[RMDB]
RNA sequence: GGGAACGACUCGAGUAGAGUCGAAAAGUCAGGUCGUCGGCCAGUUCGCGCUGCAGCGGCCCUGGCACCACGACGGUCAGGUCGGCCUGCACCAGGAAGUGAUCGAUGGGCUUGGGCAGCGCCCGAGCAAACCGUACUCGUUCGCGAGUACGGUUUGAAAAGAAACAACAACAACAAC
Reactivity to 2A3 in 0.01 (KOAc 150mM, MgCl2 10mM, bicine 150mM(pH8.5), 24C), signal-to-noise 4, nucleotides 027 to 126: g070u040c030a030g020g020u040c040g000u020c050g070g010c020c010a030g030u100u130c060g020c000g000c100u050g000c020a100g130c010g020g010c000c000c010u010g030g000c050a020c010c030a020c030g070a020c050g010g020u020c010a000g050g030u130c080g160g240c000c010u010g000c030a040c010c000a040g080g080a130a080g060u030g060a110u050c030g030a060u100g040g000g000c040u090u140g140g030g000c010a040g030c020g000c020c000c000g020a020g030
Reactivity to DMS in 0.01 (KOAc 150mM, MgCl2 10mM, bicine 150mM(pH8.5), 24C), signal-to-noise 7, nucleotides 027 to 126: g010u000c040a050g000g010u000c030g020u000c060g020g010c050c030a080g010u000u000c080g000c060g030c070u000g020c040a080g010c180g000g000c050c030c010u000g000g000c120a070c060c020a090c050g010a140c130g000g000u000c020a040g010g000u010c130g030g010c050c010u000g010c130a080c020c030a100g010g010a100a120g000u000g000a050u000c020g000a080u000g000g010g010c010u000u000g010g000g010c010a050g010c090g010c010c040c020g000a080g000
Chemical mapping of a 177-nucleotide RNA with 2A3 and DMS. It was measured as part of the RMDB library OK2TRN.